Overview:
Structure probing data (2A3) for a 207-nucleotide construct. For 2A3, 1,112 sequencing reads were counted. 2A3 adducts were read by reverse transcription with SuperScript II with manganese. The RNA was probed in 150 mM KOAc, 10 mM MgCl2 and 150 mM bicine (pH 8.5) at 24 C.
[RMDB]
RNA sequence: GGGAACGACUCGAGUAGAGUCGAAAACUAGACGCGUUCGCGCGUCUAGAUUAAGCCGCCGUAGCUCAGUUGGUAGAGCACCUCGCUGUUAACGAGGUUGUCCCAGGUUCGAGUCCUGGCGGUGGCGCCAACAGUGCGAUCCAUUCGUGGAUCGCAACCUUGUUUCGCAGUUCGCUGCGAAACAAGGAAAAGAAACAACAACAACAAC
Reactivity to 2A3 in 0.01 (KOAc 150mM, MgCl2 10mM, bicine 150mM(pH8.5), 24C), signal-to-noise 2, nucleotides 027 to 156: c000u000a010g000a000c000g020c020g030u090u050c120g030c020g000c000g080u010c000u000a000g000a000u020u070a080a020g010c010c000g040c010c010g000u010a000g020c010u000c010a030g030u230u070g180g270u200a010g010a010g000c000a000c000c000u000c000g040c090u200g110u300u200a090a010c010g000a000g000g000u000u030g000u030c030c000c000a000g000g000u000u000c000g000a000g010u000c000c000u000g000g010c000g000g000u000g010g000c000g000c000c010a140a080c070a010g140u020g050c000g000a000u000c000c000a040u060u130c220g070u070g000g000a000u000c010g010c000a000a000